[RMDB]
The data come from the RNA Mapping Database (RMDB), library OK2TST. The record gives the reactivity of an RNA of 177 nucleotides to 2A3 and DMS. Reactivities are given for positions 27 through 126. Reactivities are rounded to 0.1 and cut off at 0 and 3. Conditions: 150 mM KOAc, 10 mM MgCl2 and 150 mM bicine (pH 8.5), 24 C.
RNA sequence: GGGAACGACUCGAGUAGAGUCGAAAAUAACUGAUUAUUUUUAGCUUUUUGCGCAAAACCAAUAAUAUUGCUUUCGAUGUCCGCAAAACUCAUUUGAUCAGCAUCACGUAAUACUGGUACAACCAAAAUAGUAAGUUAAGUUCGCUUAACUUACUAUAAAAGAAACAACAACAACAAC
Reactivity to 2A3 in 0.01 (KOAc 150mM, MgCl2 10mM, bicine 150mM(pH8.5), 24C), signal-to-noise 5, nucleotides 027 to 126: u060a020a010c020u030g050a080u040u060a070u050u110u010u040u090a020g020c010u060u080u030u090u140g030c020g010c010a010a030a020a070c020c030a030a010u120a170a030u110a080u080u100g020c040u040u080u040c060g070a060u070g050u040c030c010g000c020a000a010a010a080c020u030c030a050u010u030u070g040a030u010c010a010g010c010a020u050c030a020c040g010u030a080a020u030a180c040u030g040g020u080a060c040a060a040c030c030a030a060a050
Reactivity to DMS in 0.01 (KOAc 150mM, MgCl2 10mM, bicine 150mM(pH8.5), 24C), signal-to-noise 7, nucleotides 027 to 126: u010a080a190c100u000g000a070u000u000a020u010u000u000u010u010a130g010c100u000u000u000u000u010g020c050g020c080a080a040a070a090c110c030a050a050u010a080a080u010a300u000u010g010c070u000u000u000c080g010a100u000g000u000c150c030g010c060a020a020a060a070c060u000c180a060u000u000u000g010a030u000c010a040g020c070a020u000c040a050c100g010u010a080a080u000a090c160u000g000g000u010a050c100a050a080c020c040a040a060a060